RNA sequence: GGGAACGACUCGAGUAGAGUCGAAAAAGGCGAUUCUGGAUGGCGUUGAACAGUUCGGUCCUUAUUUCGUUAUCGCUCCGGGCCUGGCAAUGCCGCACGGGCGUCCGGAAGAGGGCGUUAAGAAAACAGGUCGGAUUAUAUUCGUAUAAUCCGACCUAAAAGAAACAACAACAACAAC
Reactivity to DMS in 0.01 (KOAc 150mM, MgCl2 10mM, bicine 150mM(pH8.5), 24C), signal-to-noise 2, nucleotides 027 to 126: a030g040g010c040g010a040u000u030c040u000g010g010a100u030g000g000c090g000u030u000g020a110a140c110a170g000u020u040c030g000g010u020c010c030u010u020a050u000u010u010c030g000u020u060a020u010c040g000c070u000c000c020g000g020g000c020c030u000g020g020c010a070a120u030g030c140c070g050c030a060c070g000g020g010c010g000u020c060c030g000g060a050a020g010a140g040g020g000c000g000u000u000a030a100g010a070a040a050a100c270
Reactivity to 2A3 in 0.01 (KOAc 150mM, MgCl2 10mM, bicine 150mM(pH8.5), 24C), signal-to-noise 2, nucleotides 027 to 126: a000g060g000c010g020a040u170u030c020u050g050g030a080u090g010g000c010g020u000u060g070a110a020c020a060g080u090u040c040g050g050u040c000c000u100u070a190u140u070u020c000g060u030u100a110u100c010g000c060u050c060c040g000g000g020c000c060u060g000g000c070a120a120u280g020c000c010g000c020a030c000g030g000g000c000g010u050c040c000g000g070a080a010g050a090g010g020g000c010g020u040u080a140a020g100a050a060a020a030c140